[RMDB]
Chemical mapping of a 207-nucleotide RNA with 2A3. It was measured as part of the RMDB library OK3TST.
RNA sequence: GGGAACGACUCGAGUAGAGUCGAAAAACGAGGACGGGACCGACGAUCUCGUGUUAAUGACCGGGAAAGUGAUCGACCGCGACACGGACGAGGCGAUCGCGAUUAACGACCUCAAGCGCGGAAAAUAUGAGGUCGAGGCCGACGUGGGCGAGUCCAGGUGACUUAUCAGUUUCGACUGAUAAGUCACAAAAGAAACAACAACAACAAC
Reactivity to 2A3 in 0.01 (KOAc 150mM, MgCl2 10mM, bicine 150mM(pH8.5), 24C), signal-to-noise 1, nucleotides 027 to 156: a000c010g000a040g020g060a040c040g000g000g010a040c010c060g060a030c000g040a170u000c000u010c010g050u120g010u030u110a180a140u060g000a030c000c010g030g010g000a060a140a000g030u050g010a000u020c020g300a300c000c010g040c000g000a000c040a020c190g230g040a060c070g010a030g000g000c000g000a000u020c030g010c040g040a060u080u030a120a020c020g010a030c000c020u080c060a040a020g040c050g000c000g100g190a100a020a050a000u210a050u090g000a000g060g020u000c040g000a020g000g020c020c020g040a000c010g000u070g000g030g000c020g070a010g000u000c040c000a030g030